Conditions: 150 mM KOAc, 10 mM MgCl2 and 150 mM bicine (pH 8.5), 24 C.
This 207-nucleotide RNA was probed chemically with 2A3 and DMS.
Values cover nucleotides 27 to 156.

[RMDB]
RNA sequence: GGGAACGACUCGAGUAGAGUCGAAAAGUAUUGAAUAAUACAACCUUCUUCCACUGCCGUGAAAUGUCAACAGCUGCUCUCCCACUAGAUAGGGCGUAGCUUUCCACAGACGUGAAAACAUCGCUGUGGUCCAUCUCUAUUUACUGCAAGCAGAAGAAAAAUUAUUACGGUUCGCCGUAAUAAUUUUAAAAGAAACAACAACAACAAC
Reactivity to 2A3 in 0.01 (KOAc 150mM, MgCl2 10mM, bicine 150mM(pH8.5), 24C), signal-to-noise 4, nucleotides 027 to 156: g000u010a020u050u110g080a190a110u220a250a020u030a060c020a040a090c010c000u030u060c000u020u010c030c010a050c040u010g010c010c020g070u040g060a060a060a060u110g030u090c060a050a020c020a150g000c000u010g010c000u020c010u040c010c010c010a080c050u090a050g050a130u100a060g020g000g000c010g010u020a000g000c040u020u040u010c010c000a020c010a100g130a260c020g040u030g040a050a090a050a040c030a030u150c040g000c010u000g000u010g000g020u010c030c010a100u030c010u000c010u100a090u050u060u040a030c030u020g020c020a030a080g010c010a010g020a040a020g020a000
Reactivity to DMS in 0.01 (KOAc 150mM, MgCl2 10mM, bicine 150mM(pH8.5), 24C), signal-to-noise 2, nucleotides 027 to 156: g010u010a040u000u020g020a160a110u010a060a070u000a060c030a090a080c030c020u010u000c030u000u000c020c020a080c010u000g030c000c040g050u030g000a090a080a140u010g000u000c020a050a140c090a090g020c000u000g010c030u000c070u000c030c020c020a130c120u000a090g020a200u010a060g000g020g000c170g020u000a070g020c150u010u000u000c010c020a050c050a070g010a120c050g050u000g000a100a120a120a130c070a040u000c040g030c020u000g000u010g000g030u000c040c050a090u010c000u020c020u000a090u000u000u000a080c030u000g010c040a040a080g000c030a060g000a060a080g020a040